[RMDB]
RNA sequence: GGGAACGACUCGAGUAGAGUCGAAAAGAAACCUUCACAUGUCCGACCAGCUGCCUGUUGCCAGAGCCUGAAAAGGUGAACCCACUGGCUCAACAGCUGGAGAGGAAGGAUGACUUGUUCCAGCUGGACUUUGCCUUCUAUUCGUAGAAGGCAAAGUAAAAGAAACAACAACAACAAC
Reactivity to DMS in 0.01 (KOAc 150mM, MgCl2 10mM, bicine 150mM(pH8.5), 24C), signal-to-noise 6, nucleotides 027 to 126: g000a130a120a060c010c000u000u000c020a090c120a150u030g010u020c060c040g000a290c010c000a030g000c000u000g000c210c090u000g020u030u000g000c000c000a010g000a170g010c000c010u000g000a080a050a130a040g010g020u000g010a110a140c080c070c110a300c010u000g000g000c000u000c040a050a100c010a010g020c000u000g000g010a050g010a160g010g020a040a020g000g000a090u010g010a210c030u000u000g000u010u000c010c010a170g010c110u010g020g000
Reactivity to 2A3 in 0.01 (KOAc 150mM, MgCl2 10mM, bicine 150mM(pH8.5), 24C), signal-to-noise 6, nucleotides 027 to 126: g030a030a040a000c000c000u020u040c040a080c030a200u190g080u080c040c010g030a090c000c000a010g010c000u020g030c000c080u090g050u210u070g020c000c000a010g000a020g070c000c000u030g010a040a030a020a030g040g010u080g050a110a110c010c010c030a040c030u000g000g000c000u000c010a020a040c000a010g000c000u010g020g000a010g020a010g010g040a010a010g010g050a180u120g050a050c020u050u070g020u070u000c010c010a050g030c100u090g020g020
The record gives the reactivity of an RNA of 177 nucleotides to DMS and 2A3. Values are in units of 0.01, from 0 to 300, in steps of 10. For DMS the reverse transcriptase was MarathonRT. The data come from the RNA Mapping Database (RMDB), libraries RFM100 and RFMREP.